[RMDB]
This 177-nucleotide RNA was probed chemically with DMS and 2A3.
It was measured as part of the RMDB library M2PK90.
Reactivities are rounded to 0.1 and cut off at 0 and 3.
For 2A3 the reverse transcriptase was SuperScript II with manganese.
The RNA was probed in 150 mM KOAc, 10 mM MgCl2 and 150 mM bicine (pH 8.5) at 24 C.
RNA sequence: GGGAACGACUCGAGUAGAGUCGAAAAAUUGUGCGGUCUCUGAGAGAGGAGAACCUGUCUGAGAGAGCUAACCGCUUUUCAUAGUGGCUCUCUGAGAGACUCUGAGGCUCCUCUCGUUCCCAACCAACACAUAACUUGUAUUCGUACAAGUUAUGUGAAAAGAAACAACAACAACAAC
Reactivity to DMS in 0.01 (KOAc 150mM, MgCl2 10mM, bicine 150mM(pH8.5), 24C), signal-to-noise 9, nucleotides 027 to 126: a070u000u010g010u000g010c070g010g010u000c070u000c070u000g000a200g000a020g010a020g000g000a020g010a070a090c020c020u000g000u000c010u000g010a030g000a010g000a010g010c190u010a050a060c060c050g010c050u000u000u010u020c180a100u010a050g010u000g000g000c000u000c000u000c000u000g000a070g010a060g000a050c050u000c190u010g010a090g010g010c000u000c000c000u000c010u000c000g000u000u000c000c000c000a130a120c190c120a070a170
Reactivity to 2A3 in 0.01 (KOAc 150mM, MgCl2 10mM, bicine 150mM(pH8.5), 24C), signal-to-noise 9, nucleotides 027 to 126: a000u160u130g040u070g050c070g010g040u050c030u030c050u210g040a040g000a000g000a000g090g010a050g020a150a230c010c020u040g050u000c010u090g020a020g000a000g000a000g030c040u040a060a060c030c030g050c090u060u050u060u090c140a140u130a080g080u050g040g000c010u000c000u000c000u020g020a050g000a000g010a090c030u030c130u270g080a070g050g000c010u000c000c000u000c000u000c000g000u000u000c000c000c000a000a030c020c010a060a010